The record gives the reactivity of an RNA of 177 nucleotides to 2A3 and DMS.
The reactions ran in a buffer of 150 mM KOAc, 10 mM MgCl2 and 150 mM bicine (pH 8.5), at 24 C.
The 2A3 profile rests on 1,380 reads.
The DMS profile rests on 693 reads.
It was measured as part of the RMDB library OK2TRN.
RNA sequence: GGGAACGACUCGAGUAGAGUCGAAAACAUCAGCCACCUGCGCCGCCUGGUGGAACUGAACCUGGGCGACGAGGAACUCCUCGAGCGCGAGCUGGCCCUGCUGGUCAGCGCCCACGACGACUGAGGAGGUGGAGUGAGGAUUCGUCCUCACUCCACCAAAAGAAACAACAACAACAAC
Reactivity to 2A3 in 0.01 (KOAc 150mM, MgCl2 10mM, bicine 150mM(pH8.5), 24C), signal-to-noise 2, nucleotides 027 to 126: c000a110u090c070a010g050c010c050a080c000c020u120g050c070g080c020c070g030c010c000u040g040g050u130g030g140a070a110c080u100g040a040a040c020c000u050g000g000g000c000g000a050c020g010a020g000g040a060a060c010u050c000c000u020c030g060a090g000c050g010c000g000a000g050c000u030g000g000c000c000c020u160g100c120u150g040g000u010c010a010g050c000g050c020c020c030a040c020g150a020c040g070a070c060u050g030a020g050g000a020
Reactivity to DMS in 0.01 (KOAc 150mM, MgCl2 10mM, bicine 150mM(pH8.5), 24C), signal-to-noise 1, nucleotides 027 to 126: c070a130u000c090a060g000c080c100a070c020c050u030g030c050g020c040c060g010c050c000u000g000g000u010g000g040a060a050c170u010g010a070a210c100c000u000g000g020g000c040g010a010c010g010a070g000g020a180a140c170u000c010c000u000c000g000a120g000c030g010c000g010a150g010c000u000g000g010c000c000c230u010g030c150u000g030g000u000c030a040g000c000g020c050c050c040a080c100g000a070c010g000a080c070u010g010a070g010g030a070